Chemical mapping of a 207-nucleotide RNA with 2A3 and DMS. Source: RMDB library RNAMAK, as collected in RNAgym. DMS (dimethyl sulfate) methylates the pairing face of unpaired adenines and cytosines.
RNA sequence: GGGAACGACUCGAGUAGAGUCGAAAAUCAAUGCGUUCGCGCAUUGAAAAAAGCGUACUACUAGAGGGCUUGUCAGACCCAUUCCCAAAUAGGAAUGCGGUCUUGGAUUUAGCCUACCCACCUAGUAUCGCAAAAAACAUCGGAUUCGUCCGAUGAACUAAUGCUUAGGCUUCGGCCUAAGCAUUAGAAAAGAAACAACAACAACAAC
Reactivity to 2A3 in 0.01 (KOAc 150mM, MgCl2 10mM, bicine 150mM(pH8.5), 24C), signal-to-noise 3, nucleotides 027 to 156: u030c000a010a010u010g000c000g040u060u080c230g030c020g000c110a000u000u020g040a080a020a000a000a010a020g020c020g040u080a080c050u010a000c000u000a030g000a020g010g010g020c010u020u020g010u030c000a010g010a000c010c000c000a000u000u020c030c000c010a170a260a160u230a070g000g010a000a000u030g050c160g030g000u000c000u000u060g030g000a040u300u150u130a000g000c020c000u040a080c020c010c000a020c010c020u010a000g010u000a040u300c130g000c130a000a180a000a000a000a000c010a000u020c010g000g030a010u030u080c170g060u020c090c000g000a000u020g000a020a010
Reactivity to DMS in 0.01 (KOAc 150mM, MgCl2 10mM, bicine 150mM(pH8.5), 24C), signal-to-noise 2, nucleotides 027 to 156: u000c000a040a000u000g010c030g000u010u020c300g050c060g060c020a040u010u000g010a020a000a070a060a030a150g010c010g000u010a080c150u000a020c000u010a030g000a270g010g010g010c010u000u000g000u000c000a110g010a010c010c010c010a010u000u000c010c000c020a030a150a210u000a020g000g010a020a020u000g030c110g060g000u000c010u010u020g000g030a050u000u010u000a070g000c010c000u010a040c070c010c020a300c110c000u000a000g000u010a050u010c060g050c030a000a050a070a140a040a060c010a010u000c010g000g010a100u000u020c300g010u000c000c000g020a000u000g000a050a190
Reactivities are rounded to 0.1 and cut off at 0 and 3.
Reactivities are given for positions 27 through 156.
DMS adducts were read by reverse transcription with MarathonRT.